[RMDB]
RNA sequence: GGGAACGACUCGAGUAGAGUCGAAAAAGGGACACCUCAGUCACAUUUUACCAACAGAGUGAGAGUGAGGUUAACCUCUCAUUUCUGUUGGUGAACGCAGAAGUUAGAGGUUGAGAACACUGACAACUGCGUUCAUAGUUGUGACUGUUCUGUCCCACUAUUUAGUCGAGUUCGCUCGACUAAAUAGAAAAGAAACAACAACAACAAC
Reactivity to 2A3 in 0.01 (KOAc 150mM, MgCl2 10mM, bicine 150mM(pH8.5), 24C), signal-to-noise 8, nucleotides 027 to 156: a000g000g000g000a000c000a000c000c010u010c010a000g000u020c000a000c000a010u110u170u110u150a020c000c000a000a000c000a000g010a010g010u010g000a000g000a000g010u190g070a120g120g120u140u120a060a060c020c000u000c000u000c000a020u180u300u010c000u000g000u000u000g000g000u000g000a000a000c000g000c000a000g000a050a010g030u000u020a040g060a140g170g110u060u110g090a080g030a100a010c020a000c020u010g010a000c010a030a040c010u000g000c000g010u000u000c000a010u060a030g110u050u040g000u000g000a000c000u000g000u010u000c010u000g000u000c000c000c000a000
Reactivity to DMS in 0.01 (KOAc 150mM, MgCl2 10mM, bicine 150mM(pH8.5), 24C), signal-to-noise 2, nucleotides 027 to 156: a070g000g050g000a040c030a000c020c000u000c010a050g020u000c010a040c030a030u000u000u000u000a200c020c030a060a070c010a030g000a080g040u000g000a070g010a070g050u030g010a180g040g030u000u010a100a200c180c000u000c000u000c000a020u020u020u000c000u000g010u000u000g010g040u000g000a000a010c030g000c000a010g030a060a300g010u000u000a010g020a230g070g010u010u000g010a230g020a120a210c040a110c040u000g000a030c010a020a300c000u000g000c030g000u000u000c020a040u000a060g020u000u000g030u000g000a060c020u020g000u010u000c020u000g040u000c000c010c000a030

Structure probing data (2A3 and DMS) for a 207-nucleotide construct. For DMS, 3,240 sequencing reads were counted. DMS adducts were read by reverse transcription with MarathonRT. High 2A3 reactivity points to a flexible backbone, as in loops and unpaired stretches. The 2A3 profile rests on 10,352 reads. The reactions ran in a buffer of 150 mM KOAc, 10 mM MgCl2 and 150 mM bicine (pH 8.5), at 24 C.